Annotation:
Structure probing data (2A3 and DMS) for a 177-nucleotide construct. For 2A3 the reverse transcriptase was SuperScript II with manganese.

RNA sequence: GGGAACGACUCGAGUAGAGUCGAAAAGUAGGAUUGGAUACACAAUUAAUAGAGGAUUUUUUAAUUGGAGGAAGCUUUGCGCAAUUCUUCGGUUAUACCGCUAGUCAAGCUUAUUCGUCACGUAGUGGCAAGUACUUCUUUUCGAAGAAGUACUUGCAAAAGAAACAACAACAACAAC
Reactivity to 2A3 in 0.01 (KOAc 150mM, MgCl2 10mM, bicine 150mM(pH8.5), 24C), signal-to-noise 3, nucleotides 027 to 126: g030u030a030g000g020a040u020u050g000g030a020u130a170c070a010c020a100a200u170u180a100a090u070a080g010a030g020g010a030u010u040u000u010u090u190a050a140u090u080g000g020a020g000g020a020a010g000c040u080u140u150g030c110g010c020a030a120u120u000c000u030u040c000g010g000u040u010a060u060a110c010c000g000c060u010a010g040u040c040a040a000g000c010u040u060a070u160u070c030g030u030c020a040c110g040u090a050g040u060g130
Reactivity to DMS in 0.01 (KOAc 150mM, MgCl2 10mM, bicine 150mM(pH8.5), 24C), signal-to-noise 5, nucleotides 027 to 126: g010u000a130g000g010a030u000u010g010g010a150u000a120c150a130c120a100a090u000u010a070a110u000a020g000a060g000g000a000u000u000u020u000u000u000a020a090u010u000g010g020a030g000g020a070a090g010c120u000u000u010g010c190g010c070a070a100u000u000c030u000u010c020g000g010u000u000a100u000a140c050c030g020c100u000a030g010u010c120a040a090g010c060u000u010a080u010u000c070g000u000c050a050c080g030u000a070g040u000g010
For DMS, 3,914 sequencing reads were counted.
Conditions: 150 mM KOAc, 10 mM MgCl2 and 150 mM bicine (pH 8.5), 24 C.
Source: RMDB library OK2TST, as collected in RNAgym.